[RMDB]
RNA sequence: GGGAACGACUCGAGUAGAGUCGAAAAGAUAUGGAGCGAACUACAGCCGAAGCCAGCGUUGAAAACCGUCGUAAGCUCGGAAACGAGCUUACGACGGUUGGAGCUGUCGAAGCUGCGCUCCUAAGUCGUAGUAUGAUAACUUCGGUUAUCAUACUACAAAAGAAACAACAACAACAAC
Reactivity to DMS in 0.01 (KOAc 150mM, MgCl2 10mM, bicine 150mM(pH8.5), 24C), signal-to-noise 3, nucleotides 027 to 126: g010a080u000a300u000g000g000a010g020c010g010a090a100c130u020a300c020a040g040c000c040g020a220a290g000c240c000a030g020c000g020u010u000g000a200a080a040a000c030c000g010u000c000g040u010a010a000g000c000u020c000g030g020a060a080a270c020g060a020g010c000u000u000a000c000g050a000c000g000g010u000u010g000g020a130g000c000u000g020u000c020g000a290a190g010c000u000g000c020g000c000u010c010c000u020a010a080g010u000c120
Structure probing data (DMS) for a 177-nucleotide construct. For DMS, 2,241 sequencing reads were counted.